[RMDB]
RNA sequence: GGGAACGACUCGAGUAGAGUCGAAAAUUAGGGGAUCGAAGACGAUCAGAUACCGUCGUAGUCUUAACCAUAAACUAUGCCGACUAGGGAUCGGGCGAUGUUAUUAUUUUGACUCGCUCGGCACCUUGCCGAUACCGCUGUUCGCAGCGGUAUCGGCAAAAGAAACAACAACAACAAC
Reactivity to 2A3 in 0.01 (KOAc 150mM, MgCl2 10mM, bicine 150mM(pH8.5), 24C), signal-to-noise 1, nucleotides 027 to 126: u300u040a070g000g010g010g010a000u060c000g050a190a020g110a040c000g000a000u010c070a000g100a060u100a110c000c000g000u130c000g000u090a050g040u000c050u080u080a120a100c000c000a060u000a300a200a070c030u020a160u300g000c150c070g110a050c000u090a000g000g000g000a060u050c000g000g000g100c090g090a090u090g100u170u000a000u040u050a140u100u300u060u060g020a010c090u000c000g000c000u000c000g000g000c000a020c000c000u000u000

An RNA of 177 nucleotides, treated with 2A3 and read out base by base. The data come from the RNA Mapping Database (RMDB), library RFM100. The reactions ran in a buffer of 150 mM KOAc, 10 mM MgCl2 and 150 mM bicine (pH 8.5), at 24 C. 2A3 adducts were read by reverse transcription with SuperScript II with manganese. Values cover nucleotides 27 to 126.